[RMDB]
RNA sequence: GGGAACGACUCGAGUAGAGUCGAAAAUUUAGGGAUGCAGAGGGCCGUAUGACACCAUACUGCCAUGAUCCUACUGUUUUGCCUGGGGCUUUUGCGUACAGUCAGAUGAGGCCUCAUGUUCGUUACGUAAGCCAACUCUUCGGAGUUGGCAAAAGAAACAACAACAACAAC
Reactivity to DMS in 0.01 (KOAc 150mM, MgCl2 10mM, bicine 150mM(pH8.5), 24C), signal-to-noise 2, nucleotides 027 to 129: u000u040u020a100g000g040g000a010u010g110c020a130g050a150g010g040g000c000c110g000u000a050u010g000a180c300a220c300c040a010u020a030c040u000g040c030c030a190u000g060a110u030c020c000u070a110c210u020g000u040u010u000u000g040c120c060u000g010g040g020g040c120u000u100u000u050g010c220g060u020a130c080a080g060u030c060a070g010a060u040g000a180g030g000c070c000u010c030a100u040g010u030u030c160g050u030u010a100c040g060u000a140a140
Reactivity to 2A3 in 0.01 (KOAc 150mM, MgCl2 10mM, bicine 150mM(pH8.5), 24C), signal-to-noise 2, nucleotides 027 to 129: u010u060u090a040g030g000g010a000u150g110c040a100g040a090g140g100g000c000c000g000u060a020u000g050a110c030a050c080c040a020u050a000c000u030g010c000c000a050u020g020a000u000c030c000u020a020c000u090g100u210u030u130u020g060c000c000u030g020g020g030g000c010u040u090u080u250g080c000g030u050a050c110a240g100u170c000a010g020a120u010g000a030g000g010c010c010u000c000a020u060g040u020u080c090g050u040u000a050c090g000u040a000a000